Chemical mapping of a 177-nucleotide RNA with 2A3 and DMS. The 2A3 profile rests on 5,011 reads.
RNA sequence: GGGAACGACUCGAGUAGAGUCGAAAAAAGAAGAUGUCAAAGAACGGGGGCAUCCAGAAAAAGCCCACGUUCCUCCUCACUCAUGCGCGCUCCGAAUCCCACAAACCGCGCGACAUCUUCGGAGCGACCUAAUUUAAUCCUUCGGGAUUAAAUUAGGAAAAGAAACAACAACAACAAC
Reactivity to 2A3 in 0.01 (KOAc 150mM, MgCl2 10mM, bicine 150mM(pH8.5), 24C), signal-to-noise 3, nucleotides 027 to 126: a020a000g090a010a010g000a000u010g010u010c010a010a000a130g010a010a000c010g000g000g000g000g030c020a020u050c060c070a060g300a040a170a010a010a010g010c000c000c000a000c010g000u010u010c010c000u060c000c010u060c020a080c010u180c040a070u300g060c080g000c000g000c060u000c000c000g030a080a080u030c000c040c000a040c020a010a100a040c070c080g080c030g010c000g100a000c000a000u010c000u010u000c020g020g000a000g000c010g020a020
Reactivity to DMS in 0.01 (KOAc 150mM, MgCl2 10mM, bicine 150mM(pH8.5), 24C), signal-to-noise 4, nucleotides 027 to 126: a050a070g010a050a020g010a020u000g010u010c000a130a180a090g000a010a020c010g020g010g020g000g020c000a110u020c150c170a180g000a090a090a080a090a130g010c000c000c000a040c000g010u000u000c010c040u000c040c020u000c080a080c200u010c110a050u010g010c100g010c020g010c030u000c020c010g000a130a140u000c000c000c000a070c200a060a080a090c210c090g000c070g010c100g010a000c030a000u000c000u010u000c000g010g000a060g020c050g010a120
It was measured as part of the RMDB library OK2TST.
The RNA was probed in 150 mM KOAc, 10 mM MgCl2 and 150 mM bicine (pH 8.5) at 24 C.
Values cover nucleotides 27 to 126.